[RMDB]
The record gives the reactivity of an RNA of 207 nucleotides to 2A3. The reactions ran in a buffer of 150 mM KOAc, 10 mM MgCl2 and 150 mM bicine (pH 8.5), at 24 C.
RNA sequence: GGGAACGACUCGAGUAGAGUCGAAAAGAAGCCGGACGCAAUCUCAAAACUCCUACGACGCAACAAGAUUCACGAUCGCGCCGAGCUGGCCGAAGCAAUCGGAAUCAGCCGCGCAACUGCCUACAACCUGUUCAACGCGGACUGGUCGGGCAAAGUCCUUGGUGCAUUAGUUCGCUAAUGCACCAAGAAAAGAAACAACAACAACAAC
Reactivity to 2A3 in 0.01 (KOAc 150mM, MgCl2 10mM, bicine 150mM(pH8.5), 24C), signal-to-noise 2, nucleotides 027 to 156: g050a030a000g080c040c050g030g020a020c030g020c040a030a120u010c040u060c130a100a160a030a020c020u020c020c020u080a050c070g070a040c030g040c010a050a050c030a070a170g030a110u070u100c050a040c120g090a080u070c080g020c020g000c070c070g080a100g000c000u010g040g030c010c030g030a060a060g140c090a080a270u030c010g010g070a010a120u150c010a020g020c010c010g000c000g020c000a010a040c050u050g000c000c000u100a090c020a090a040c000c020u010g030u030u020c020a110a070c100g040c100g160g010a020c010u030g040g000u000c040g010g000g000c000a020a070a000g030u020c010